[RMDB]
An RNA of 177 nucleotides, treated with DMS and 2A3 and read out base by base.
The data come from the RNA Mapping Database (RMDB), library OK1LIB.
For DMS the reverse transcriptase was MarathonRT.
High 2A3 reactivity points to a flexible backbone, as in loops and unpaired stretches.
For 2A3 the reverse transcriptase was SuperScript II with manganese.

RNA sequence: GGGAACGACUCGAGUAGAGUCGAAAAGCACGUCCGGGAAGUCCCGUGCGAACACUUGAGCUCCGGCUUGACCGCUCUUGUGGAUUAGGACGUUCUAGCUCCGGCUUGGCCGCUAGUUCGUCCGAAAGCUAUGGAUACCUUUCGAGGUAUCCAUAGCAAAAGAAACAACAACAACAAC
Reactivity to DMS in 0.01 (KOAc 150mM, MgCl2 10mM, bicine 150mM(pH8.5), 24C), signal-to-noise 4, nucleotides 027 to 126: g010c060a070c040g010u020c030c040g030g000g020a180a130g020u000c020c040c020g000u010g000c010g000a120a100c030a030c020u000u030g000a030g010c050u040c260c090g000g000c090u030u020g000a140c120c030g000c020u000c000u000u000g000u000g000g020a130u040u020a050g020g000a000c000g020u000u010c000u000a010g000c030u040c140c020g010g000c100u010u040g010g010c120c080g000c000u010a010g000u000u000c000g010u010c000c000g000a040a040a090
Reactivity to 2A3 in 0.01 (KOAc 150mM, MgCl2 10mM, bicine 150mM(pH8.5), 24C), signal-to-noise 9, nucleotides 027 to 126: g050c030a010c060g030u040c050c010g010g000g040a170a050g160u160c000c010c000g000u020g010c020g020a070a010c010a000c030u010u030g000a010g010c020u060c090c040g070g000c050u190u200g090a270c020c020g000c000u010c000u010u030g030u010g030g030a080u040u160a060g000g000a000c000g000u000u000c000u000a010g000c040u070c100c020g140g020c120u130u230g130g010c030c020g010c010u000a000g000u000u000c010g000u000c000c000g000a020a010a000